Structure probing data (2A3 and DMS) for a 177-nucleotide construct.
2A3 adducts were read by reverse transcription with SuperScript II with manganese.
High 2A3 reactivity points to a flexible backbone, as in loops and unpaired stretches.
DMS adducts were read by reverse transcription with MarathonRT.
It was measured as part of the RMDB library OK2TRN.
Reactivities are given for positions 27 through 126.
RNA sequence: GGGAACGACUCGAGUAGAGUCGAAAAGAGCUUGCAGCAACCGCUACCCUUAAUGGAAGGUAAUGGAUAAAGGCUUUUGCAGAUCUCUGAAUUAAAAUCGGUGAGUAUUGGCAGCGAGCGAUUGCGCAUCUGACCAAGUGUUCGCACUUGGUCAGAUAAAAGAAACAACAACAACAAC
Reactivity to 2A3 in 0.01 (KOAc 150mM, MgCl2 10mM, bicine 150mM(pH8.5), 24C), signal-to-noise 1, nucleotides 027 to 126: g050a010g000c020u050u070g000c000a020g000c030a060a040c000c000g030c070u030a030c040c020c040u110u200a220a090u180g190g040a050a040g060g000u070a060a090u080g000g040a030u110a080a090a050g020g000c000u110u080u080u170g000c010a030g000a180u000c030u000c000u050g080a110a060u160u160a140a050a020a190u120c040g070g020u050g000a050g000u090a120u110u100g090g010c030a010g020c030g050a000g000c010g070a120u040u120g070c050g000c010
Reactivity to DMS in 0.01 (KOAc 150mM, MgCl2 10mM, bicine 150mM(pH8.5), 24C), signal-to-noise 2, nucleotides 027 to 126: g000a120g000c110u000u000g030c080a140g010c060a110a090c020c030g000c060u000a050c050c000c010u000u000a070a160u000g000g000a070a060g020g020u000a060a010u010g000g030a050u000a060a070a160g000g000c030u000u000u010u010g020c070a090g030a080u000c020u010c020u000g000a060a110u030u000a020a080a100a060u000c060g010g010u010g000a070g010u000a070u000u010g000g040c100a070g000c030g000a060g020c050g000a080u000u000g020c070g030c110